[RMDB]
RNA sequence: GGGAACGACUCGAGUAGAGUCGAAAAGCAUACUAAAGUUAUUAAGGCUUUAACCGCCAAAGCAAAUGGUUUACGUGAUGCUAUUGAGGUACUGAAAUGAAAAAGCGUUUAUUAGAAGAUAUUGCAGCUUCAAGUAAUUCCAGUCUAAUUAAAAUUAACUUGAGUUUGUAUUCGUACAAACUCAAGUAAAAGAAACAACAACAACAAC
Reactivity to 2A3 in 0.01 (KOAc 150mM, MgCl2 10mM, bicine 150mM(pH8.5), 24C), signal-to-noise 2, nucleotides 027 to 156: g020c000a020u070a130c020u080a100a040a060g090u130u090a150u250u120a230a070g020g000c030u080u120u040a080a070c030c020g000c020c030a040a040a000g050c020a030a080a130u110g010g020u000u090u070a050c020g080u110g050a020u010g020c000u040a040u070u150g080a060g060g040u050a010c010u010g050a030a050a030u060g020a000a030a040a030a010g000c020g000u050u100u100a020u040u050a060g120a140a020g020a080u090a020u130u160g010c030a030g010c020u060u060c090a030a080g040u040a050a030u070u000c020c000a010g020u000c020u080a000a150u100u100a110a090a050a080u180u130a090
Reactivity to DMS in 0.01 (KOAc 150mM, MgCl2 10mM, bicine 150mM(pH8.5), 24C), signal-to-noise 1, nucleotides 027 to 156: g010c020a050u010a110c050u030a020a070a090g010u000u010a140u000u010a070a160g040g000c030u000u010u000a050a090c110c040g000c040c030a100a120a100g030c090a030a050a100u000g020g000u000u000u000a050c090g030u010g010a100u000g020c010u000a090u000u000g000a130g000g000u010a030c000u000g000a030a010a020u010g000a090a120a140a050a020g010c010g050u000u000u000a040u010u000a030g030a070a170g000a070u000a050u000u000g060c170a090g010c010u000u000c080a090a160g010u000a070a070u000u000c050c030a020g010u000c030u010a090a100u010u000a000a110a060a150u000u000a100
Chemical mapping of a 207-nucleotide RNA with 2A3 and DMS. The data come from the RNA Mapping Database (RMDB), library OK3TST. DMS adducts were read by reverse transcription with MarathonRT. The DMS profile rests on 1,971 reads. The reactions ran in a buffer of 150 mM KOAc, 10 mM MgCl2 and 150 mM bicine (pH 8.5), at 24 C.